[RMDB]
RNA sequence: GGGAACGACUCGAGUAGAGUCGAAAAUGUGUUAAGACUUGAAAGUCAAGAUUACUCCUUGAUCUAUGGGCUGCAGAAUGGAUGUUUUAUUAGGGCACCUGAGAACAACAUUAAUCUCCCUGUAUAUCUCCUUCAGAGCUCUUGGGUGACCAGGUGCCACAAAGACACGAUUCGUCGUGUCUUUGUGAAAAGAAACAACAACAACAAC
Reactivity to 2A3 in 0.01 (KOAc 150mM, MgCl2 10mM, bicine 150mM(pH8.5), 24C), signal-to-noise 4, nucleotides 027 to 156: u130g040u000g010u020u080a090a020g030a050c030u060u100g120a230a100a020g050u020c030a020a000g040a070u090u180a100c010u040c010c010u000u050g000a020u040c020u090a050u110g030g010g020c010u030g000c020a020g040a110a030u030g030g040a040u040g060u010u060u040u090a130u100u140a070g010g020g010c000a020c020c010u040g030a050g020a130a010c040a090a000c010a050u140u150a070a080u120c020u020c030c010c010u010g080u010a170u030a060u130c060u080c040c040u130u130c070a050g000a030g120c030u000c000u060u030g040g000g010u020g010a020c020c000a040g010g000u000g000c000
Reactivity to DMS in 0.01 (KOAc 150mM, MgCl2 10mM, bicine 150mM(pH8.5), 24C), signal-to-noise 3, nucleotides 027 to 156: u010g010u020g000u010u000a090a140g000a070c010u020u000g000a110a120a150g020u000c020a050a070g020a150u010u000a090c110u010c060c030u000u000g030a060u000c030u000a110u010g020g000g020c020u010g010c040a080g010a070a140u000g010g010a090u000g000u010u000u000u000a110u000u010a130g010g000g000c010a040c010c020u000g000a120g010a060a050c050a050a090c060a070u010u000a050a100u000c000u000c020c010c010u010g000u010a090u000a080u010c010u000c020c060u000u000c060a080g000a150g020c030u000c030u010u010g000g000g050u010g000a120c050c000a030g030g000u010g000c040